[RMDB]
RNA sequence: GGGAACGACUCGAGUAGAGUCGAAAAGAAAGAAAGACACGUCUGGUGAGGAUGAAAACAGGACAGGUUUCGCUAAAAUAUUACCGAAUGCCAAUAUGUCGAGACACCUUGGCUGUCUGAGGACGAAUCGUUCCCGAUUAUUCGUAAUCGGGAACGAAAAAGAAACAACAACAACAAC
Reactivity to DMS in 0.01 (KOAc 150mM, MgCl2 10mM, bicine 150mM(pH8.5), 24C), signal-to-noise 3, nucleotides 027 to 126: g000a110a080a060g020a060a080a050g000a000c050a050c150g020u000c050u020g030g000u010g010a100g010g020a120u020g010a080a050a050a120c110a050g000g010a080c170a090g000g000u000u000u020c020g000c150u000a000a090a040a090u000a060u010u000a090c300c020g000a040a030u060g050c030c030a070a130u010a120u010g000u010c010g010a170g010a130c040a040c030c020u020u010g010g010c040u020g010u010c040u000g050a110g000g020a130c090g020a060a110
Reactivity to 2A3 in 0.01 (KOAc 150mM, MgCl2 10mM, bicine 150mM(pH8.5), 24C), signal-to-noise 2, nucleotides 027 to 126: g070a010a020a000g060a030a030a000g030a010c040a010c130g060u020c020u000g010g010u050g070a130g060g060a050u120g100a030a030a110a110c110a110g030g080a010c000a000g020g030u000u030u020c010g000c060u090a080a000a140a000u300a220u130u060a000c020c020g020a040a010u190g000c020c000a040a000u210a080u240g040u030c010g000a010g030a080c030a000c000c000u110u150g000g000c030u040g030u000c000u010g070a040g060g000a020c000g060a090a000
This 177-nucleotide RNA was probed chemically with DMS and 2A3. The 2A3 profile rests on 1,005 reads. Conditions: 150 mM KOAc, 10 mM MgCl2 and 150 mM bicine (pH 8.5), 24 C. For 2A3 the reverse transcriptase was SuperScript II with manganese. Source: RMDB libraries RFM100 and RFMREP, as collected in RNAgym.